[RMDB]
RNA sequence: GGGAACGACUCGAGUAGAGUCGAAAAGUUACACGCUUCGGCGUGUAACAAAUACUCAAACGGUCGCGGAAACGUGAGGACACUCUAGGAGGCAUCCAUGCAAAACCCAUUGCUUCGGCAAUGGGAACCCUUAAACCAAGUUCGCUUGGUUUAAGGGAAAAGAAACAACAACAACAAC
Reactivity to DMS in 0.01 (KOAc 150mM, MgCl2 10mM, bicine 150mM(pH8.5), 24C), signal-to-noise 3, nucleotides 027 to 126: g000u000u000a000c010a000c010g000c000u000u010c170g070g020c000g040u000g000u000a000a000c000a030a080a090u000a080c020u000c010a060a080a100c130g010g010u010c020g030c090g000g020a060a060a110c040g000u010g000a060g000g000a120c140a050c040u010c070u010a130g030g000a070g030g000c070a050u000c010c030a030u010g000c170a090a020a100a140c000c000c000a020u000u000g000c000u000u010c170g040g000c000a010a010u000g000g010g000a010a030
Overview: Conditions: 150 mM KOAc, 10 mM MgCl2 and 150 mM bicine (pH 8.5), 24 C. An RNA of 177 nucleotides, treated with DMS and read out base by base. Values cover nucleotides 27 to 126. DMS adducts were read by reverse transcription with MarathonRT.